Notes: An RNA of 177 nucleotides, treated with DMS and 2A3 and read out base by base. The RNA was probed in 150 mM KOAc, 10 mM MgCl2 and 150 mM bicine (pH 8.5) at 24 C. DMS adducts were read by reverse transcription with MarathonRT. The DMS profile rests on 39,440 reads.
RNA sequence: GGGAACGACUCGAGUAGAGUCGAAAAGCACGUCCGGUGCGGUGCGCCGUUCCAGUGGCCCGACAAUCAGCCCCAGCGCAUAGGUCGGCACUGGGACACGCUGGGUAAACGUCAGGGUCUUCAGGCCAAAUUUAAUACCGUUCGCGGUAUUAAAUUUAAAAGAAACAACAACAACAAC
Reactivity to DMS in 0.01 (KOAc 150mM, MgCl2 10mM, bicine 150mM(pH8.5), 24C), signal-to-noise 9, nucleotides 027 to 126: g010c050a040c040g000u020c040c050g000g010u000g010c020g010g020u010g010c030g010c100c080g000u000u000c000c010a050g010u010g000g010c160c010c020g000a020c010a110a110u040c210a180g000c060c020c060c100a090g000c090g000c210a110u030a100g010g020u000c020g010g000c010a010c000u000g000g000g000a020c020a080c070g000c000u000g000g000g010u010a050a090a100c120g000u010c040a090g010g000g000u010c020u010u010c090a100g000g000c050c090
Reactivity to 2A3 in 0.01 (KOAc 150mM, MgCl2 10mM, bicine 150mM(pH8.5), 24C), signal-to-noise 9, nucleotides 027 to 126: g030c020a010c040g070u070c050c040g060g020u060g020c030g020g030u070g020c040g010c030c080g010u050u020c010c000a020g020u040g050g070c050c020c000g000a000c010a040a130u200c080a070g040c000c000c010c030a040g010c060g010c100a090u100a150g170g020u010c010g000g000c000a000c010u010g000g000g000a010c010a000c020g010c010u040g010g020g030u120a110a100a040c040g030u040c090a170g000g000g040u010c000u040u080c040a030g020g020c010c010